The record gives the reactivity of an RNA of 177 nucleotides to DMS and 2A3.

[RMDB]
RNA sequence: GGGAACGACUCGAGUAGAGUCGAAAAGAUAUGGAUACGACCAGGGAGAUACUCGGAAACGAGAAUAUCAUCGAUCUGGCGUAUCCUAAGUCAAAGUUUAGUGCAAAGUUCGCUUUGCACUAAACAAGCUUUGCAUCAUGUUCGCAUGAUGCAAAGCAAAAGAAACAACAACAACAAC
Reactivity to DMS in 0.01 (KOAc 150mM, MgCl2 10mM, bicine 150mM(pH8.5), 24C), signal-to-noise 2, nucleotides 027 to 126: g030a050u010a300u030g020g000a020u000a020c000g000a180c000c000a010g000g020g010a300g020a020u000a070c010u000c000g000g010a130a130a180c040g000a030g000a070a040u000a080u010c020a110u000c030g000a290u000c000u000g010g000c000g010u000a000u000c020c000u000a000a050g000u000c050a030a090a070g010u000u000u000a000g000u000g000c020a020a020a010g010u000u010c240g010c030u000u000u000g000c000a000c000u000a000a010a050c020a120a130
Reactivity to 2A3 in 0.01 (KOAc 150mM, MgCl2 10mM, bicine 150mM(pH8.5), 24C), signal-to-noise 2, nucleotides 027 to 126: g000a030u110a070u100g020g000a010u000a020c030g300a300c040c000a000g040g000g000a040g010a020u040a030c000u010c010g050g040a030a090a030c030g030a000g000a090a120u290a030u140c160a040u150c020g030a040u010c020u000g000g000c000g010u000a000u000c000c000u010a010a010g000u010c090a080a000a090g000u030u000u010a000g000u000g000c000a000a000a000g030u050u070c180g010c150u030u000u010g000c030a010c000u000a020a020a010c000a000a020
Description:
The RNA was probed in 150 mM KOAc, 10 mM MgCl2 and 150 mM bicine (pH 8.5) at 24 C. Reactivities are given for positions 27 through 126.